[RMDB]
RNA sequence: GGGAACGACUCGAGUAGAGUCGAAAAAAGACAACUGCCAACGAAGAGCUGGCUCUCGCUGCUUAAUCUAAACAAUUAAGUGAGCGCGCUUAUCGGAUUUUGCGCCUGUCCGGGUCCGAAGGCGUGGAGAAGGCAGGAUCGCCAAGGGAACAUGCCUCCUAAAGAAGUGGUUCGCCACUUCUUUAGGAAAAGAAACAACAACAACAAC
Reactivity to 2A3 in 0.01 (KOAc 150mM, MgCl2 10mM, bicine 150mM(pH8.5), 24C), signal-to-noise 2, nucleotides 027 to 156: a000a010g090a040c050a090a030c030u040g020c030c000a050a010c070g060a010a090g020a000g030c060u130g090g020c020u030c000u000c000g040c010u020g000c000u020u000a060a010u010c030u080a000a010a050c020a020a020u010u000a000a000g020u030g250a020g020c000g000c020g000c010u110u100a170u280c000g010g010a030u040u060u090u300g070c060g030c010c030u070g070u060c040c110g040g030g030u010c000c000g040a020a010g010g010c010g010u060g020g010a090g010a100a080g010g020c000a000g020g010a060u070c030g040c070c020a000a030g070g010g030a000a060c010a050u110g000c000c010u010

This 207-nucleotide RNA was probed chemically with 2A3. The reactions ran in a buffer of 150 mM KOAc, 10 mM MgCl2 and 150 mM bicine (pH 8.5), at 24 C. Reactivities are rounded to 0.1 and cut off at 0 and 3.